[RMDB]
This 177-nucleotide RNA was probed chemically with DMS and 2A3. For 2A3 the reverse transcriptase was SuperScript II with manganese. The reactions ran in a buffer of 150 mM KOAc, 10 mM MgCl2 and 150 mM bicine (pH 8.5), at 24 C. For DMS the reverse transcriptase was MarathonRT.
RNA sequence: GGGAACGACUCGAGUAGAGUCGAAAAUACUGGUCAGAUUUAUGAAGAUUGUGCAACUCCUUUUUCUGGACUUUGGGAGUAUCAUAUAGACAGUGGUGAAACCAAAGAACUUGUACCACAAGGAAAGCAUAAUCACGUCGUUCGCGACGUGAUUAUGAAAAGAAACAACAACAACAAC
Reactivity to DMS in 0.01 (KOAc 150mM, MgCl2 10mM, bicine 150mM(pH8.5), 24C), signal-to-noise 4, nucleotides 027 to 126: u030a060c090u000g000g000u010c020a040g000a040u040u000u000a090u010g000a060a100g000a100u000u000g030u000g000c150a110a130c100u010c000c020u030u000u020u000u030c050u020g020g010a110c030u000u000u020g010g000g020a040g030u010a030u000c010a030u000a090u030a110g020a150c270a090g000u000g000g010u000g000a070a110a160c020c020a010a030a040g000a070a150c060u000u000g000u010a110c150c090a100c110a050a040g020g000a060a080a120g010
Reactivity to 2A3 in 0.01 (KOAc 150mM, MgCl2 10mM, bicine 150mM(pH8.5), 24C), signal-to-noise 6, nucleotides 027 to 126: u080a010c040u080g020g030u040c030a030g040a200u090u130u120a150u220g050a060a050g110a140u060u150g040u040g040c040a060a080c030u030c020c000u050u070u020u060u090c090u060g040g030a060c000u010u010u030g040g000g020a010g020u020a010u040c020a000u110a030u050a160g140a120c110a070g030u070g110g190u030g040a010a030a010c010c000a020a010a000g010a050a050c020u030u030g050u090a110c030c040a060c060a080a020g050g010a100a060a000g040